[RMDB]
RNA sequence: GGGAACGACUCGAGUAGAGUCGAAAAGGAUAGUAGUUCGCUACUAUCCAAAAGAUCUAUGAAAAUAGAUCUAAAAUGGUGGUGCUCACCAAAGAGCAAAAAAAACACAUAGCUUCGGCUAUGUGAAUCUUAUUGUUGUGUUCGCACAACAAUAAGAAAAAGAAACAACAACAACAAC
Reactivity to 2A3 in 0.01 (KOAc 150mM, MgCl2 10mM, bicine 150mM(pH8.5), 24C), signal-to-noise 1, nucleotides 027 to 126: g000g010a000u000a010g000u000a010g020u020u030c170g010c080u010a000c000u000a000u000c000c000a000a000a000a010g000a000u010c000u000a010u020g020a060a020a040a010u020a010g000a000u000c000u020a020a050a040a170u300g020g010u020g060g050u020g020c000u000c000a030c010c000a040a050a010g000a000g000c000a040a030a000a000a000a000a000a000c000a000c000a000u000a000g000c000u050u040c270g110g000c000u010a000u000g010u000g010a000a060
Reactivity to DMS in 0.01 (KOAc 150mM, MgCl2 10mM, bicine 150mM(pH8.5), 24C), signal-to-noise 2, nucleotides 027 to 126: g000g000a000u000a000g010u000a000g000u010u010c240g020c000u000a000c000u000a010u000c000c010a020a020a090a050g000a010u000c000u000a000u000g000a140a070a120a010u000a000g000a010u000c000u000a040a070a060a120u000g010g040u000g000g010u000g000c010u010c020a050c030c050a050a100a050g000a030g030c010a000a000a000a050a050a060a120a120c000a010c000a000u000a000g020c000u010u010c190g040g020c000u000a000u000g000u000g000a030a080
Structure probing data (2A3 and DMS) for a 177-nucleotide construct. The reactions ran in a buffer of 150 mM KOAc, 10 mM MgCl2 and 150 mM bicine (pH 8.5), at 24 C.